An RNA of 177 nucleotides, treated with DMS and 2A3 and read out base by base. Source: RMDB library M2PK50, as collected in RNAgym. For DMS the reverse transcriptase was MarathonRT. Conditions: 150 mM KOAc, 10 mM MgCl2 and 150 mM bicine (pH 8.5), 24 C.
RNA sequence: GGGAACGACUCGAGUAGAGUCGAAAAGGGCGUCAUUUCGAUGACGCCCAUACGUCUACUCCGAUUGGCGAGGACGACGCCGACGGGCGCGUUUCCCAAUCGCACCGUCCAGAUUCGUCUGGACGAAACUAGUUAUCAAGUUCGCUUGAUAACUAGUAAAAGAAACAACAACAACAAC
Reactivity to DMS in 0.01 (KOAc 150mM, MgCl2 10mM, bicine 150mM(pH8.5), 24C), signal-to-noise 9, nucleotides 027 to 126: g010g010g010c000g020u000c000a010u000u000u010c190g010a020u000g000a010c000g010c000c000c000a010u000a010c240g010u000c010u000a030c020u000c010c010g000a050u000u000g000g010c190g010a060g000g010a030c030g010a100c010g010c000c000g010a160c300g000g000g010c040g010c010g010u000u000u000c000c000c000a030a020u000c020g010c110a100c180c010g000u000c000c010a010g000a030u000u010c180g010u000c000u000g000g000a010c010g000a020a050
Reactivity to 2A3 in 0.01 (KOAc 150mM, MgCl2 10mM, bicine 150mM(pH8.5), 24C), signal-to-noise 9, nucleotides 027 to 126: g000g000g000c010g010u010c010a010u040u070u160c220g090a020u010g000a000c000g000c000c000c000a000u010a000c000g030u000c010u010a010c010u000c020c010g050a060u000u040g030g010c190g040a070g050g040a020c030g080a160c010g020c000c000g210a300c180g070g010g000c020g000c000g000u000u010u020c000c000c000a000a010u020c010g000c020a060c050c020g000u000c000c000a000g010a030u030u070c110g070u000c090u010g000g000a000c000g000a030a010